[RMDB]
RNA sequence: GGGAACGACUCGAGUAGAGUCGAAAAGAUAUGGAUCCUGAUGCAAGACUAUCUCGGAAACGAGUAAGGUUGAUGACCAUUGGAUCCUAAGUCAAAACAUGUGAUACUCUUCGGAGUAUCACAUGAACUAUACCUUUGCCUUCGGGCAAAGGUAUAGAAAAGAAACAACAACAACAAC
Reactivity to 2A3 in 0.01 (KOAc 150mM, MgCl2 10mM, bicine 150mM(pH8.5), 24C), signal-to-noise 2, nucleotides 027 to 126: g020a010u030a000u060g010g000a000u000c000c020u090g060a040u030g010c030a180a080g000a010c010u040a070u220c000u010c000g000g030a040a030a020c000g000a010g000u020a110a030g060g020u000u010g080a300u060g000a010c020c000a010u030u030g010g000a000u000c010c000u020a030a000g010u000c010a000a000a070a210c010a000u010g010u010g000a000u000a010c000u020c000u070u080c300g050g000a020g000u000a000u010c000a000c000a000u010g000a000a000
Reactivity to DMS in 0.01 (KOAc 150mM, MgCl2 10mM, bicine 150mM(pH8.5), 24C), signal-to-noise 3, nucleotides 027 to 126: g000a010u000a150u010g000g000a020u000c000c010u010g020a010u010g010c010a070a150g000a000c010u000a300u010c010u020c000g010g000a040a050a060c000g000a010g010u010a140a170g000g010u000u000g020a190u010g000a110c300c000a020u000u000g000g000a000u000c000c000u000a010a030g010u000c000a090a040a110a230c010a000u000g000u000g010a010u000a000c000u000c000u000u000c220g020g000a010g000u000a000u000c000a000c000a000u000g000a060a100

Description
The data come from the RNA Mapping Database (RMDB), library TTRDEL. Structure probing data (2A3 and DMS) for a 177-nucleotide construct. For 2A3, 4,284 sequencing reads were counted. The DMS profile rests on 2,295 reads. The reactions ran in a buffer of 150 mM KOAc, 10 mM MgCl2 and 150 mM bicine (pH 8.5), at 24 C. DMS adducts were read by reverse transcription with MarathonRT.